[RMDB]
Annotation
The data come from the RNA Mapping Database (RMDB), library M2PK90. An RNA of 177 nucleotides, treated with 2A3 and DMS and read out base by base. For DMS, 5,693 sequencing reads were counted. For DMS the reverse transcriptase was MarathonRT. For 2A3, 8,642 sequencing reads were counted. Reactivities are rounded to 0.1 and cut off at 0 and 3. The RNA was probed in 150 mM KOAc, 10 mM MgCl2 and 150 mM bicine (pH 8.5) at 24 C.
RNA sequence: GGGAACGACUCGAGUAGAGUCGAAAAUCAAAUAUAAAAGCUGAGAUGAGCUCAGCAAGGGUAUUUUUCGAGAGAUGAGCUCUCGUUCCCUAUGCCUUGCUCCGGAAACGGUAGCUUUUACAAAAAACGUACCAUAUAGAUUCGUCUAUAUGGUACGAAAAGAAACAACAACAACAAC
Reactivity to 2A3 in 0.01 (KOAc 150mM, MgCl2 10mM, bicine 150mM(pH8.5), 24C), signal-to-noise 5, nucleotides 027 to 126: u020c000a010a090a010u250a020u030a110a050a000a000g000c020u010g000a020g010a190u230g140a080g210c000u010c010a000g000c000a000a000g010g000g000u020a020u010u060u000u010u030c010g000a000g000a010g020a090u240g200a130g160c010u000c000u000c010g000u000u000c000c000c000u010a030u030g060c000c000u000u020g010c000u010c010c000g020g020a070a080a050c020g010g010u030a010g000c000u010u020u050u050a060c100a020a180a010a020a030a010
Reactivity to DMS in 0.01 (KOAc 150mM, MgCl2 10mM, bicine 150mM(pH8.5), 24C), signal-to-noise 5, nucleotides 027 to 126: u010c140a080a100a100u010a170u000a020a010a030a050g020c010u000g010a030g000a300u000g010a200g020c010u000c010a010g010c000a000a000g000g000g000u000a030u000u000u000u000u000c000g000a020g010a020g000a250u010g010a210g020c010u000c000u000c000g010u010u000c000c000c000u000a130u000g010c010c010u000u000g010c000u000c010c010g000g010a080a080a080c020g000g000u000a010g000c000u000u000u010u000a040c210a010a040a090a060a070a110